[RMDB]
Chemical mapping of a 177-nucleotide RNA with DMS and 2A3. DMS adducts were read by reverse transcription with MarathonRT.
RNA sequence: GGGAACGACUCGAGUAGAGUCGAAAAUAUCGAGAUGGAGAUUGAUCUCCUGGGCCUGUUUUACCGCCUCGGCAGGAUUGGUGUCCAGCAAGGCAUUCAGAUGAGCGGUUCGCUCAUAGAACCGGUAUACGAUUAAAUCCUUCGGGAUUUAAUCGUAAAAAGAAACAACAACAACAAC
Reactivity to DMS in 0.01 (KOAc 150mM, MgCl2 10mM, bicine 150mM(pH8.5), 24C), signal-to-noise 3, nucleotides 027 to 126: u000a050u010c040g000a210g010a070u010g010g010a050g000a080u000u010g010a120u000c010u010c050c000u010g020g000g020c040c080u010g010u000u010u010u020a090c150c180g000c040c020u010c200g000g030c140a050g000g010a080u020u010g020g010u000g000u010c000c030a060g010c110a120a070g010g020c030a100u010u010c080a090g010a050u000g010a040g010c000g020g020u010u020c040g030c040u010c050a040u020a060g010a060a120c090c030g010g010u010a110
Reactivity to 2A3 in 0.01 (KOAc 150mM, MgCl2 10mM, bicine 150mM(pH8.5), 24C), signal-to-noise 1, nucleotides 027 to 126: u110a030u050c030g020a000g050a120u080g010g020a060g040a040u100u190g120a070u000c010u030c030c000u000g000g040g040c040c030u030g040u080u130u060u020a050c030c030g010c010c010u040c060g060g130c040a030g000g120a040u060u130g190g010u160g040u000c000c000a000g010c040a050a070g030g030c020a010u120u090c050a060g020a160u010g040a060g000c030g050g110u090u110c090g000c010u000c070a000u050a080g050a000a000c000c010g000g010u080a060

Record summary:
The DMS profile rests on 2,276 reads. It was measured as part of the RMDB library OK2TRN.